RNA sequence: GGGAACGACUCGAGUAGAGUCGAAAAGGGGUCAGUCGAACUCGUCAAUGAUGCCUGGUCGAGCUAUGCUGAAGCCUCCACGGCAUAGCUAAGACAGCCAGGUUGAGACGAGGGAGACUGACGGAGGCACCCAAACCGAUAUGGUUCGCCAUAUCGGGCCGAAUAAUAAGUUCGCUUAUUAUUCGGCAAAAGAAACAACAACAACAAC
Reactivity to 2A3 in 0.01 (KOAc 150mM, MgCl2 10mM, bicine 150mM(pH8.5), 24C), signal-to-noise 3, nucleotides 027 to 156: g040g000g010g010u010c000a000g000u010c000g010a040a030c010u000c000g010u000c020a260a300u020g000a000u010g010c000c000u010g000g040u130c050g040a010g010c000u000a000u010g000c000u030g040a090a040g010c000c000u000c000c000a020c010g000g000c000a000u010a000g000c010u040a060a040g170a060c030a010g010c000c000a000g000g000u000u010g000a000g000a000c000g000a000g000g000g020a000g000a000c000u000g000a000c000g000g010a000g000g000c010a040c000c000c010a060a020a040c000c000g000a000u010a000u000g030g050u060u050c220g030c080c000a000u000a000u000c000g000g010
Reactivity to DMS in 0.01 (KOAc 150mM, MgCl2 10mM, bicine 150mM(pH8.5), 24C), signal-to-noise 3, nucleotides 027 to 156: g000g020g060g030u000c010a020g010u000c030g020a300a300c010u010c010g050u010c010a070a300u020g020a090u010g020c010c000u000g000g020u000c050g000a060g010c020u000a010u020g000c000u010g000a040a090g000c030c000u000c010c020a300c020g000g030c000a020u010a010g010c010u000a070a100g020a200c180a060g000c030c000a020g000g000u000u000g000a060g000a010c010g000a020g010g000g000a300g000a020c000u000g000a010c020g000g010a030g050g030c000a140c020c010c010a040a090a280c000c000g020a030u000a030u000g000g000u000u000c300g040c050c000a020u010a020u000c000g000g010
An RNA of 207 nucleotides, treated with 2A3 and DMS and read out base by base. For 2A3, 10,627 sequencing reads were counted. For DMS, 6,378 sequencing reads were counted. DMS adducts were read by reverse transcription with MarathonRT. 2A3 adducts were read by reverse transcription with SuperScript II with manganese. The RNA was probed in 150 mM KOAc, 10 mM MgCl2 and 150 mM bicine (pH 8.5) at 24 C.